[RMDB]
The record gives the reactivity of an RNA of 177 nucleotides to DMS.
RNA sequence: GGGAACGACUCGAGUAGAGUCGAAAAGAUAUGGACCGCUCGAUAAGCCUGUGUCGGAAACGACACCAGGCUUUUGACGAGCUGUCCUAAGUCAAAAGCCGAGGGAAACUUCGGUUUCCCUCGGCAACCAAAAGUUAGUGUUCGCACUAACUUUUGGAAAAGAAACAACAACAACAAC
Reactivity to DMS in 0.01 (KOAc 150mM, MgCl2 10mM, bicine 150mM(pH8.5), 24C), signal-to-noise 3, nucleotides 027 to 126: g000a030u000a250u000g000g010a010c000c140g010c000u000c000g010a120u000a040a010g000c000c000u000g010u000g000u000c000g000g000a080a070a120c000g000a000c000a010c300c300a010g000g010c000u000u000u000u010g010a250c050g000a000g010c000u000g000u010c000c000u000a010a020g000u000c020a050a090a090a180g000c000c010g000a020g010g000g000a020a020a010c010u000u010c200g020g000u000u000u000c000c000c000u000c010g010g010c000a000a020